[RMDB]
RNA sequence: GGGAACGACUCGAGUAGAGUCGAAAAGAUAUGGAGCGAGGUGACCCUCGGGUCUGCUCGGAAACGAGCAGGCGCCUAGCGAGCACCCGCUCCUAAGUCAAAAGUCGUUAUCUUCGGAUAACGACAAGUACAUACAACUCUUCGGAGUUGUAUGUACAAAAGAAACAACAACAACAAC
Reactivity to 2A3 in 0.01 (KOAc 150mM, MgCl2 10mM, bicine 150mM(pH8.5), 24C), signal-to-noise 3, nucleotides 027 to 126: g010a010u050a030u170g010g010a000g000c040g040a250g140g030u040g070a300c020c010c050u080c100g000g000g000u010c010u000g000c000u010c020g020g000a040a060a010c000g000a020g020c000a000g000g000c010g300c030c000u080a080g060c050g130a030g010c010a000c000c010c000g000c010u010c000c000u010a020a010g010u010c030a020a050a080a220g000u000c000g010u000u000a000u010c010u030u100c300g180g000a000u000a000a000c000g000a000c010a000a000
Reactivity to DMS in 0.01 (KOAc 150mM, MgCl2 10mM, bicine 150mM(pH8.5), 24C), signal-to-noise 3, nucleotides 027 to 126: g000a030u010a300u000g000g000a020g000c010g010a150g020g020u000g000a110c010c080c010u010c300g020g020g020u000c000u000g000c000u020c010g010g000a020a050a150c000g000a010g000c010a010g010g010c010g030c030c030u000a030g030c180g010a140g050c010a000c000c000c000g000c000u000c000c000u000a010a060g000u010c020a080a130a150a160g000u000c000g010u010u000a010u000c000u000u010c270g030g010a010u000a000a010c000g000a000c000a000a070